[RMDB]
Source: RMDB library VIROID, as collected in RNAgym. This 207-nucleotide RNA was probed chemically with 2A3. The reactions ran in a buffer of 150 mM KOAc, 10 mM MgCl2 and 150 mM bicine (pH 8.5), at 24 C.
RNA sequence: GGGAACGACUCGAGUAGAGUCGAAAACGUCCUUGUCCUUCUUUCCGAGAAUUCCUUUGACGUUUCCUAGCCAGGGAUUUUCGUCCUCAAGUUUCUUGAUUUUCUUCUUAACCUUCCGGAGAUCUCUCUCGAGUUCCUCUAACUUCUUUCUUCCAUCGUAUGCUUUUAGCUUCGGCUAAAAGCAUACAAAAGAAACAACAACAACAAC
Reactivity to 2A3 in 0.01 (KOAc 150mM, MgCl2 10mM, bicine 150mM(pH8.5), 24C), signal-to-noise 2, nucleotides 027 to 156: c000g060u070c010c030u070u060g090u090c020c040u080u060c000u080u060u060c090c040g040a020g010a050a040u050u080c030c000u120u130u190g030a070c020g010u000u030u060c040c020u040a060g070c030c020a010g060g000g000a000u040u020u030u060c010g010u020c000c040u060c060a100a050g020u020u100u070c030u070u060g080a220u130u010u110u050c020u040u040c000u020u080a060a070c000c020u050u030c040c010g020g070a090g060a200u060c020u000c000u000c000u010c050g020a010g020u010u030c010c010u000c020u030a080a100c040u080u040c000u080u090u000c000u120u000c090c010a200u140c120